An RNA of 177 nucleotides, treated with DMS and read out base by base.

RNA sequence: GGGAACGACUCGAGUAGAGUCGAAAAUCAAGCGAGGAGCUAGUUCUUUUUUUUUUUUUUUUCUGAGAGGAGUCUUGCUCUGACACCCAGGCUGAAGUGCAUUGGCACAAUCUCAGCUCACUGUAAAUGGCGAUAUAAUAUUCGUAUUAUAUCGCCAAAAAGAAACAACAACAACAAC
Reactivity to DMS in 0.01 (KOAc 150mM, MgCl2 10mM, bicine 150mM(pH8.5), 24C), signal-to-noise 2, nucleotides 027 to 126: u000c120a100a130g030c090g040a270g000g000a070g000c020u000a030g000u010u000c000u010u010u000u000u000u020u010u000u010u010u080u000u060u030u000u000c060u010g000a070g020a080g010g010a050g020u010c020u000u020g030c000u000c010u000g010a180c130a090c030c010c020a150g000g000c000u000g010a040a070g010u000g010c020a280u020u000g000g040c010a040c020a070a060u000c190u000c010a000g000c010u000c100a030c100u010g020u000a040a050a150
For DMS the reverse transcriptase was MarathonRT. The data come from the RNA Mapping Database (RMDB), library OK2TRN. The reactions ran in a buffer of 150 mM KOAc, 10 mM MgCl2 and 150 mM bicine (pH 8.5), at 24 C.